Description
Structure probing data (2A3 and DMS) for a 207-nucleotide construct. For 2A3 the reverse transcriptase was SuperScript II with manganese. The RNA was probed in 150 mM KOAc, 10 mM MgCl2 and 150 mM bicine (pH 8.5) at 24 C. Reactivities are given for positions 27 through 156.
[RMDB]
RNA sequence: GGGAACGACUCGAGUAGAGUCGAAAAAGUUCGCGCUUCCGUGAAACGCGAAAAUCGGACGGUGGCUGCAAGUCGCAUCGCCAAACCGCGGCAAGUGGAGUUAGCGAGAGGAGGCUGGGUUUUGGCUAGAACACACGGUACUUCGGUACCGUGUGAAGCAUCCAUAUAUCUUCGGAUAUAUGGAUGCAAAAGAAACAACAACAACAAC
Reactivity to 2A3 in 0.01 (KOAc 150mM, MgCl2 10mM, bicine 150mM(pH8.5), 24C), signal-to-noise 3, nucleotides 027 to 156: a000g080u050u030c010g000c000g000c060u100u030c020c070g070u100g070a140a060a020c030g000c010g050a060a000a000a080u120c060g020g020a020c000g040g030u020g050g040c060u050g010c070a100a010g060u100c040g000c000a040u060c060g000c020c000a060a030a010c070c020g010c000g030g010c070a150a050g040u050g110g020a070g020u060u100a050g030c030g040a030g000a040g050g000a040g030g020c090u030g050g030g000u000u020u050u070g030g000c020u040a030g070a170a000c000a000c000a000c010g000g000u000a010c010u010u060c120g060g000u000a000c000c000g020u000g000u000g010a000a000
Reactivity to DMS in 0.01 (KOAc 150mM, MgCl2 10mM, bicine 150mM(pH8.5), 24C), signal-to-noise 1, nucleotides 027 to 156: a100g030u000u010c020g030c020g060c000u000u000c120c180g000u000g020a060a040a030c010g070c010g000a050a040a050a140u000c060g040g030a080c000g000g000u000g000g010c020u000g000c050a090a090g020u000c050g070c000a140u000c020g000c010c020a030a060a130c090c010g000c020g020g010c100a040a110g000u000g010g000a140g020u010u000a110g030c020g040a090g020a100g000g010a040g010g010c020u000g020g000g010u000u010u020u010g000g000c070u000a110g010a110a200c010a010c000a040c010g000g040u000a020c000u000u000c300g060g030u000a000c010c000g020u000g000u000g010a020a150